[RMDB]
Source: RMDB library M2RFPK, as collected in RNAgym. The record gives the reactivity of an RNA of 207 nucleotides to DMS and 2A3. DMS adducts were read by reverse transcription with MarathonRT. The RNA was probed in 150 mM KOAc, 10 mM MgCl2 and 150 mM bicine (pH 8.5) at 24 C. The 2A3 profile rests on 510 reads. For 2A3 the reverse transcriptase was SuperScript II with manganese.
RNA sequence: GGGAACGACUCGAGUAGAGUCGAAAAAAUGGCACUGCAGAGCUGAUGGGCCAUGUACCUAUCCAAAAUUAGAUCCCAUCUUGCACACUGUGCUAAUUUGAGAUUCUCAUGCCUCCUACUUGGAGAGACCGCAUGCCCAGCUUCGGCUGGGCAUGAAAGAAAAACUUUAGUUCGCUAAAGUUUUUCUAAAAGAAACAACAACAACAAC
Reactivity to DMS in 0.01 (KOAc 150mM, MgCl2 10mM, bicine 150mM(pH8.5), 24C), signal-to-noise 1, nucleotides 027 to 156: a030a030u000g000g000c020a060c010u000g020c000a110g020a170g050c050u000g000a040u000g010g030g000c170c080a100u010g070u000a040c080c060u010a020u000c060c050a080a020a080a230u010u000a110g030a140u010c000c000c000a020u000c030u000u010g030c080a040c030a100c100u010g000u000g030c020u000a080a050u000u000u000g000a110g030a160u000u000c040u000c030a180u000g020c040c010u000c000c000u000a150c220u000u010g000g000a110g000a100g010a030c060c100g000c030a030u000g000c000c000c040a040g020c030u000u030c300g030g010c040u030g000g000g020c000a010u000g020a010a090
Reactivity to 2A3 in 0.01 (KOAc 150mM, MgCl2 10mM, bicine 150mM(pH8.5), 24C), signal-to-noise 1, nucleotides 027 to 156: a000a000u010g000g000c010a000c000u130g000c090a020g000a020g140c030u030g000a010u000g000g030g000c060c070a060u160g080u070a060c000c000u050a080u220c090c100a140a020a020a080u110u040a030g060a160u100c000c010c010a000u030c000u060u170g000c020a030c020a020c080u030g020u020g000c020u060a140a140u020u030u040g080a090g010a000u010u000c010u000c030a060u090g030c010c000u010c000c000u030a100c110u090u080g010g000a010g030a030g040a020c070c110g000c040a010u010g000c000c000c020a010g030c010u040u060c140g080g000c000u050g030g070g000c020a000u020g000a000a000